[RMDB]
RNA sequence: GGGAACGACUCGAGUAGAGUCGAAAAGGUAGGGCAGUAUUCCCAUCUGCAGGGAGGUCAUGAUGCCUUAUUUGUUGAAUCAUUAAAAAUGAAUAUCUCAGCUUGGAAGCCCCUGACAGAGUCGUUGAUCUCAAGUAGUCUUCGGACUACUUGAGAUAAAAGAAACAACAACAACAAC
Reactivity to DMS in 0.01 (KOAc 150mM, MgCl2 10mM, bicine 150mM(pH8.5), 24C), signal-to-noise 3, nucleotides 027 to 126: g020g020u000a020g000g000g020c000a040g010u000a100u000u000c000c010c000a110u000c060u010g000c090a080g000g020g000a070g020g010u000c080a080u010g000a110u000g000c000c020u000u000a040u000u010u010g020u000u000g010a070a100u000c070a040u010u010a000a090a100a100a090u010g010a050a080u000a090u010c070u000c020a070g000c030u000u010g000g000a100a150g000c110c000c020c020u020g000a060c080a170g010a040g020u000c020g010u010u010g000
Chemical mapping of a 177-nucleotide RNA with DMS.
The DMS profile rests on 2,663 reads.
For DMS the reverse transcriptase was MarathonRT.